Chemical mapping of a 177-nucleotide RNA with DMS. Reactivities are given for positions 27 through 126. It was measured as part of the RMDB library OK1LIB. The RNA was probed in 150 mM KOAc, 10 mM MgCl2 and 150 mM bicine (pH 8.5) at 24 C. DMS adducts were read by reverse transcription with MarathonRT.

RNA sequence: GGGAACGACUCGAGUAGAGUCGAAAAAACGCCUUGGGUAUUAGCUAAGGACGAUAGCCAAAAAGAUAUGUUAGGCAAUGUAAUGGCUCACUUAGUUGAAAAUAUUCGUUAUGCAGCUGUAUUAUUAUAGUGAUAACCACUUCGGUGGUUAUCACUAAAAAGAAACAACAACAACAAC
Reactivity to DMS in 0.01 (KOAc 150mM, MgCl2 10mM, bicine 150mM(pH8.5), 24C), signal-to-noise 1, nucleotides 027 to 126: a060a010c280g000c000c020u000u000g050g010g060u020a040u020u000a040g000c030u010a000a140g030g030a110c140g010a070u000a010g010c000c000a000a060a090a120a090g000a130u000a090u050g050u000u020a200g020g010c010a070a130u000g040u100a070a120u000g000g000c000u000c060a080c000u000u040a030g040u000u000g000a120a130a060a040u020a020u000u040c000g000u000u000a060u100g000c180a110g040c110u010g000u000a000u060u000a010u040u000a070